[RMDB]
RNA sequence: GGGAACGACUCGAGUAGAGUCGAAAACUGAAGGAAUCAGCAAAGCCAUGCGCGGAGGCGCAAAGUUCCUGCAUCACGGCAUUAAGCGCCAGCAACGUUAUGUGGCAGAAGCCAUUACUGAAGAGUGUAUUUGCAAAUCAUUCGUGAUUUGCAAAUAAAAAGAAACAACAACAACAAC
Reactivity to 2A3 in 0.01 (KOAc 150mM, MgCl2 10mM, bicine 150mM(pH8.5), 24C), signal-to-noise 7, nucleotides 027 to 126: c020u040g040a060a030g080g060a060a080u100c030a040g010c030a060a030a000g010c000c010a030u070g000c010g000c000g040g050a060g030g000c010g000c000a060a050a030g030u050u070c010c010u030g000c020a070u130c060a040c060g040g000c010a010u070u080a120a020g000c010g000c010c020a020g010c030a030a040c020g020u060u060a090u240g020u020g010g000c010a010g100a120a000g010c000c010a050u090u120a080c040u060g070a090a060g050a040g100u130g020
Reactivity to DMS in 0.01 (KOAc 150mM, MgCl2 10mM, bicine 150mM(pH8.5), 24C), signal-to-noise 9, nucleotides 027 to 126: c030u000g010a140a040g010g010a070a070u010c130a090g020c040a060a200a140g010c020c030a040u010g010c130g010c040g010g010a120g000g010c010g010c020a040a080a090g000u000u010c010c010u000g010c100a100u020c120a080c170g010g000c050a060u010u020a090a180g000c020g000c010c020a150g010c130a100a100c060g010u010u020a070u010g020u000g000g010c010a090g000a170a100g010c010c060a050u000u020a070c050u000g010a100a060g000a090g010u010g010

Notes:
Structure probing data (2A3 and DMS) for a 177-nucleotide construct. Source: RMDB libraries RFM100 and RFMREP, as collected in RNAgym.